About this RNA: Structure probing data (DMS and 2A3) for a 177-nucleotide construct. For 2A3, 34,599 sequencing reads were counted.
[RMDB]
RNA sequence: GGGAACGACUCGAGUAGAGUCGAAAAACGAUCGUGAGCGGCUUGGAGAUCGACGAGUUCUCCCGCGGCCGGAUCGACAAGUCAACCGCCGAGUUGGCUGACGAGCGCAGCGCGGUCACCGAGCUCGACUAAACAGACUAUUCGUAGUCUGUUUAGUAAAAGAAACAACAACAACAAC
Reactivity to DMS in 0.01 (KOAc 150mM, MgCl2 10mM, bicine 150mM(pH8.5), 24C), signal-to-noise 9, nucleotides 027 to 126: a130c060g000a030u000c030g010u010g020a130g030c030g010g010c020u000u000g020g000a090g000a030u000c020g010a140c180g000a250g000u000u000c020u000c010c010c300g010c050g010g010c060c020g000g000a060u000c010g010a080c120a070a050g010u000c040a040a030c010c010g020c110c250g000a130g010u000u000g000g010c000u000g000a100c030g000a030g010c050g000c060a070g010c030g000c020g010g000u000c060a120c070c050g000a080g000c020u000c050g010
Reactivity to 2A3 in 0.01 (KOAc 150mM, MgCl2 10mM, bicine 150mM(pH8.5), 24C), signal-to-noise 9, nucleotides 027 to 126: a000c030g020a030u060c050g070u070g100a110g090c050g050g000c070u080u170g060g000a060g010a040u030c030g050a070c070g050a090g030u020u010c020u010c000c010c010g030c030g050g020c020c010g010g000a060u010c010g030a030c040a070a040g030u030c010a010a010c030c040g180c090c060g140a160g230u010u010g030g000c000u000g010a030c030g010a010g020c050g000c060a060g050c020g010c020g010g020u040c040a040c110c040g000a010g000c010u030c040g020